[RMDB]
Structure probing data (2A3 and DMS) for a 177-nucleotide construct. Values cover nucleotides 27 to 126. It was measured as part of the RMDB library M2PK50. For DMS, 1,059 sequencing reads were counted.
RNA sequence: GGGAACGACUCGAGUAGAGUCGAAAAGUGGAUAGUUUCGACUAUCCACACAACUGAUGAUCUUACAGAGGAGGAUGAAGAAGAUGGCCAUCGGAUCCUCAAAUAGCACAGAGUUCGCUCUGUGCAAUCCUCAUGGAUGGUUCGCCAUCCAUGAGGAAAAAGAAACAACAACAACAAC
Reactivity to 2A3 in 0.01 (KOAc 150mM, MgCl2 10mM, bicine 150mM(pH8.5), 24C), signal-to-noise 2, nucleotides 027 to 126: g010u000g000g000a000u000a010g020u080u040u090c130g040a030c000u010a000u030c000c000a010c000a000c000a010a020c020u040g000a090u020g010a020u070c010u050u160a110c080a100g090a020g140g030a010g070g000a040u060g030a070a170g030a020a040g070a130u070g100g070c000c000a030u040c010g060g080a050u000c000c000u030c020a020a050a030u100a000g000c010a000c000a000g000a000g000u080u040c110g040c060u000c000u000g020u000g020c000a000a000
Reactivity to DMS in 0.01 (KOAc 150mM, MgCl2 10mM, bicine 150mM(pH8.5), 24C), signal-to-noise 2, nucleotides 027 to 126: g000u000g000g010a000u000a000g010u000u000u000c120g020a040c010u000a000u000c000c000a010c010a070c230a050a100c040u020g030a040u000g010a070u000c040u000u010a090c140a080g000a060g000g020a020g000g010a110u000g000a090a100g010a130a050g000a100u000g030g030c070c030a030u000c040g020g000a040u000c010c000u010c150a020a110a130u000a160g000c000a010c000a000g010a020g010u000u020c220g010c000u000c000u000g000u000g010c050a040a040